This 177-nucleotide RNA was probed chemically with DMS and 2A3. The reactions ran in a buffer of 150 mM KOAc, 10 mM MgCl2 and 150 mM bicine (pH 8.5), at 24 C.
RNA sequence: GGGAACGACUCGAGUAGAGUCGAAAAGGAAUCUUAAGAUUCGGCAAGGGUUGUGUGUCUUGCACACAUAUCUACAAGUGUUCCUUGGAAGUAGGAUUUGAACCAGAGAUUCCUGGGUUCUUGACCAGUUGUUGGGAAGUUUCGACUUCCCAACAACAAAAGAAACAACAACAACAAC
Reactivity to DMS in 0.01 (KOAc 150mM, MgCl2 10mM, bicine 150mM(pH8.5), 24C), signal-to-noise 1, nucleotides 027 to 126: g010g000a010a010u000c010u010u000a150a090g000a100u000u000c010g000g030c060a110a170g000g050g010u000u010g040u020g010u020g000u010c160u000u010g010c040a020c000a010c010a000u000a040u000c020u010a090c080a090a240g000u000g010u000u000c010c000u000u000g000g000a080a090g000u010a060g020g010a070u030u000u000g010a030a060c010c050a190g020a040g000a020u000u000c000c000u000g010g040g030u000u000c030u000u000g000a100c130c060a180
Reactivity to 2A3 in 0.01 (KOAc 150mM, MgCl2 10mM, bicine 150mM(pH8.5), 24C), signal-to-noise 1, nucleotides 027 to 126: g000g000a010a000u050c070u100u150a210a100g080a210u110u000c030g040g020c020a020a050g100g040g030u040u050g040u070g000u010g000u080c050u140u300g000c030a000c010a000c000a000u040a020u100c020u070a100c020a100a070g040u010g030u150u090c050c000u030u040g130g000a110a000g020u130a080g030g110a100u070u030u230g080a120a010c010c000a040g000a000g050a110u080u080c020c020u020g000g060g040u070u030c000u100u190g090a070c010c010a020
DMS adducts were read by reverse transcription with MarathonRT.